Chemical mapping of a 177-nucleotide RNA with DMS and 2A3. The DMS profile rests on 4,970 reads. DMS (dimethyl sulfate) methylates the pairing face of unpaired adenines and cytosines. Conditions: 150 mM KOAc, 10 mM MgCl2 and 150 mM bicine (pH 8.5), 24 C. Reactivities are given for positions 27 through 126.

RNA sequence: GGGAACGACUCGAGUAGAGUCGAAAAGAUAUGGAACAGCUGGAGGAACUACAGCCACAGUGUCGGAAACGACACUGGGCUGCCGAUGAAAGCUGUUCCUAAGUCAAAACGAAGGUUCGCCUUCGAACCCUCUAAAGGAGUUCGCUCCUUUAGAGGGAAAAGAAACAACAACAACAAC
Reactivity to DMS in 0.01 (KOAc 150mM, MgCl2 10mM, bicine 150mM(pH8.5), 24C), signal-to-noise 4, nucleotides 027 to 126: g000a070u000a300u000g000g020a010a010c000a000g020c010u010g000g000a100g000g000a120a040c080u010a300c010a000g010c000c000a070c000a010g020u000g000u000c000g000g000a100a110a150c010g010a010c000a000c010u000g000g000g000c000u000g000c010c040g010a090u010g010a150a170a030g000c000u000g020u000u000c000c000u000a000a100g010u000c020a060a060a100a180c020g010a030a020g000g010u000u010c250g000c010c000u000u000c000g010a070a120
Reactivity to 2A3 in 0.01 (KOAc 150mM, MgCl2 10mM, bicine 150mM(pH8.5), 24C), signal-to-noise 4, nucleotides 027 to 126: g000a010u060a020u110g010g000a000a000c000a010g010c000u020g000g040a020g020g020a070a040c120u210a080c300a020g030c010c030a180c000a180g000u010g000u000c000g010g010a050a060a060c020g000a000c000a000c000u000g000g000g010c000u000g000c010c010g250a290u060g020a000a010a000g000c000u000g000u010u000c000c000u000a010a010g000u010c010a010a020a100a170c030g000a010a010g030g010u080u200c300g130c080c000u010u000c010g010a040a050